An RNA of 177 nucleotides, treated with DMS and 2A3 and read out base by base. For DMS the reverse transcriptase was MarathonRT. It was measured as part of the RMDB library RFM100. For 2A3, 2,648 sequencing reads were counted. For 2A3 the reverse transcriptase was SuperScript II with manganese.
[RMDB]
RNA sequence: GGGAACGACUCGAGUAGAGUCGAAAACAGGGCAGCAUGCGCAGGAGCCAACGCGAGGUGAUGCCCUGCAUCUGCGGAGCGGACUUGGUCGUGGUUGCCAGGUUCCGCGCCGCGGCCGUACCCAGGCUCGGAGCGGGUAAUUCGUUACCCGCUCCGAAAAAGAAACAACAACAACAAC
Reactivity to DMS in 0.01 (KOAc 150mM, MgCl2 10mM, bicine 150mM(pH8.5), 24C), signal-to-noise 2, nucleotides 027 to 126: c010a020g020g020g030c020a040g000c000a010u000g020c000g010c020a180g010g010a160g040c150c140a120a100c140g020c000g010a040g010g060u010g010a070u010g000c000c000c000u030g000c050a080u030c060u020g030c000g020g010a090g000c000g000g010a060c010u000u010g000g020u000c050g010u020g030g000u030u060g000c060c000a000g010g000u010u000c000c000g000c000g040c000c000g000c010g000g040c060c040g000u020a170c000c040c010a300g000g000c100
Reactivity to 2A3 in 0.01 (KOAc 150mM, MgCl2 10mM, bicine 150mM(pH8.5), 24C), signal-to-noise 3, nucleotides 027 to 126: c000a010g010g000g000c000a010g000c000a010u120g020c020g000c010a030g050g150a040g210c110c050a060a040c060g000c020g050a060g000g130u030g000a020u010g000c010c010c010u000g000c020a060u020c050u150g000c030g000g000a010g000c000g000g020a000c000u000u020g000g000u030c080g130u190g180g070u230u100g000c000c000a000g030g000u170u060c000c000g000c000g000c000c000g010c000g000g000c000c000g000u020a040c020c000c000a010g040g000c000